[RMDB]
RNA sequence: GGGAACGACUCGAGUAGAGUCGAAAACCCGGUCGUGGCCGCCGAGGGUGACCAGAUACCGGCGGCCACCGUCGAGGCGCAUUAGCCUGCUGAUGUCGUAGCUGACCACGACCUGGUGCUGCCCGGGACCACUUAUAUGAUUCGUCAUAUAAGUGGUAAAAGAAACAACAACAACAAC
Reactivity to DMS in 0.01 (KOAc 150mM, MgCl2 10mM, bicine 150mM(pH8.5), 24C), signal-to-noise 1, nucleotides 027 to 126: c010c000c020g020g000u020c300g000u010g000g000c000c000g000c000c000g000a090g000g010g010u030g000a290c040c070a110g010a130u030a070c190c070g000g000c060g000g000c000c010a000c020c020g000u000c010g000a300g010g000c030g000c120a070u020u030a030g010c030c040u000g010c030u000g010a050u010g010u020c050g020u000a080g000c050u010g010a090c000c080a030c070g000a060c040c010u010g000g000u000g000c050u020g020c000c000c010g000g020g000
Reactivity to 2A3 in 0.01 (KOAc 150mM, MgCl2 10mM, bicine 150mM(pH8.5), 24C), signal-to-noise 4, nucleotides 027 to 126: c000c000c000g000g070u220c080g000u030g000g000c000c000g010c030c020g190a200g020g070g020u080g060a100c030c010a000g040a040u220a080c050c000g000g000c000g000g020c000c000a000c000c000g040u010c010g040a060g010g040c030g000c060a090u070u150a030g040c030c050u060g030c040u090g020a080u070g050u110c050g030u040a040g020c040u030g060a090c010c010a040c070g050a040c010c010u010g020g000u020g030c050u080g010c000c000c000g000g040g010
The data come from the RNA Mapping Database (RMDB), library OK1LIB. Structure probing data (DMS and 2A3) for a 177-nucleotide construct. Conditions: 150 mM KOAc, 10 mM MgCl2 and 150 mM bicine (pH 8.5), 24 C.